An RNA of 177 nucleotides, treated with 2A3 and DMS and read out base by base. It was measured as part of the RMDB library OK1LIB.
[RMDB]
RNA sequence: GGGAACGACUCGAGUAGAGUCGAAAAAGGAAGAUAGCGGCAGUGAUGGUGCAGCCGGAAGCCCAGGGACUCGGCGAGGACGGAUGUCGCGGUGUCGUGCACGCGCACGUAGCCGCGGGUCGCGCCGUCGAACGCAACGCUUCGGCGUUGCGUUCGAAAAAGAAACAACAACAACAAC
Reactivity to 2A3 in 0.01 (KOAc 150mM, MgCl2 10mM, bicine 150mM(pH8.5), 24C), signal-to-noise 1, nucleotides 027 to 126: a000g120g020a030a010g040a110u260a060g000c050g040g010c010a090g080u040g040a080u160g110g080u080g000c000a000g100c090c050g000g100a000a000g030c030c030c000a060g040g000g000a040c000u000c000g000g000c010g010a060g030g030a030c040g100g000a100u200g050u210c000g000c010g030g000u000g050u010c090g000u050g010c060a020c300g150c010g000c110a000c000g020u030a060g020c000c000g000c000g000g000g000u080c090g050c000g030c000c020g000
Reactivity to DMS in 0.01 (KOAc 150mM, MgCl2 10mM, bicine 150mM(pH8.5), 24C), signal-to-noise 1, nucleotides 027 to 126: a140g000g030a110a020g000a040u000a040g040c100g010g000c060a180g000u000g000a210u000g000g000u020g140c000a040g000c050c000g000g020a050a070g040c060c020c000a130g000g010g000a060c110u000c030g000g050c040g100a170g080g010a000c040g000g070a110u000g000u000c000g010c010g120g000u000g000u010c000g020u000g080c010a090c300g090c180g010c000a000c040g020u040a300g000c030c000g000c010g030g060g000u000c130g030c140g040c000c030g030